[RMDB]
RNA sequence: GGGAACGACUCGAGUAGAGUCGAAAAGAUGCCGGAACCACCACACUGGCGUUGGCACGGCAACUGGAAGCCAGGGAUGAUUUAUUGGUGGUCACCAAUGACUUUGUCAUCGCUAAUUUUUUGAUUGGCUUAUGCACCUAUUCGUAGGUGCAUAAGCAAAAGAAACAACAACAACAAC
Reactivity to 2A3 in 0.01 (KOAc 150mM, MgCl2 10mM, bicine 150mM(pH8.5), 24C), signal-to-noise 3, nucleotides 027 to 126: g030a010u070g030c000c000g010g040a040a030c010c000a020c050c000a030c000a030c090u080g070g030c050g040u070u030g030g000c020a020c050g000g000c020a050a030c020u020g070g080a070a020g020c020c010a030g020g070g030a050u050g020a020u060u100u260a070u020u090g030g040u050g030g120u090c040a010c000c010a020a070u030g040a060c060u100u190u150g000u030c020a020u020c010g030c150u080a130a260u060u050u060u080u130u100g160a140u000u090g070
Reactivity to DMS in 0.01 (KOAc 150mM, MgCl2 10mM, bicine 150mM(pH8.5), 24C), signal-to-noise 4, nucleotides 027 to 126: g020a140u000g010c010c010g010g020a160a180c040c030a090c040c030a060c150a140c200u000g010g010c050g030u000u010g000g000c110a200c060g000g000c040a040a110c050u000g000g010a080a110g000c030c020a060g000g000g020a040u000g010a080u000u010u000a040u000u000g010g020u000g010g010u020c140a110c030c020a020a020u010g000a050c300u000u000u000g000u000c010a060u010c050g010c060u030a050a030u000u000u000u000u000u000g000a220u000u000g010